Chemical mapping of a 177-nucleotide RNA with 2A3 and DMS. DMS adducts were read by reverse transcription with MarathonRT. Values cover nucleotides 27 to 126.

[RMDB]
RNA sequence: GGGAACGACUCGAGUAGAGUCGAAAAUGAAAGCUGUGUGAGCGAGGCGGGCGGUGGAUGAGGCCGUGCCCGGGCUCUGGCUGCAGCCGCCCGGGGACACGCCGUGCACCCUCGGGCUCCGGAAAAAAUAAAUGGAUAGAUUCGUCUAUCCAUUUAUAAAAGAAACAACAACAACAAC
Reactivity to 2A3 in 0.01 (KOAc 150mM, MgCl2 10mM, bicine 150mM(pH8.5), 24C), signal-to-noise 3, nucleotides 027 to 126: u200g030a090a060a010g030c070u050g020u060g050u100g200a050g020c080g020a040g050g120c040g050g000g000c160g030g030u020g040g090a060u040g050a090g110g020c140c080g020u010g010c000c000c000g000g010g000c040u080c110u080g040g000c050u170g090c080a040g020c010c020g000c030c010c000g000g000g000g000a010c000a000c010g010c020c000g000u030g030c000a020c000c000c000u010c000g000g060g040c010u010c000c010g080g000a120a110a000a010a000
Reactivity to DMS in 0.01 (KOAc 150mM, MgCl2 10mM, bicine 150mM(pH8.5), 24C), signal-to-noise 7, nucleotides 027 to 126: u010g010a090a090a120g010c040u010g010u000g020u010g010a060g010c050g010a080g020g010c030g000g010g010c160g020g010u000g000g010a060u000g010a110g010g010c050c210g020u000g000c010c010c010g010g000g000c020u010c140u010g020g010c070u010g010c210a120g000c030c100g010c000c000c000g010g000g010g000a050c010a030c090g010c030c010g000u000g000c030a040c030c000c010u000c010g000g010g010c010u000c010c050g010g000a000a010a060a090a080